[RMDB]
RNA sequence: GGGAACGACUCGAGUAGAGUCGAAAAGUCUGAGCGGUUUGAUUCUGCCCCGACUGGUUCUGGGCCGUCUGGUCCGUCGACUGAGUACCCUGGGUGGACUGGCUGGAUUGAGUGGUCUGGGUGCUGGUGUCACCCUAGACUUCGGUCUAGGGUGACAAAAAGAAACAACAACAACAAC
Reactivity to DMS in 0.01 (KOAc 150mM, MgCl2 10mM, bicine 150mM(pH8.5), 24C), signal-to-noise 1, nucleotides 027 to 126: g010u000c010u000g010a050g000c030g020g000u000u020u000g010a140u000u010c040u000g020c000c000c010c080g020a020c030u010g010g000u010u000c030u010g000g020g010c020c070g000u000c070u000g020g010u010c050c020g010u000c010g010a050c060u000g010a200g020u010a100c080c070c030u000g000g010g000u000g010g000a040c020u000g000g040c020u020g000g010a070u000u000g010a110g010u010g010g000u000c040u000g000g000g030u010g030c050u000g010g010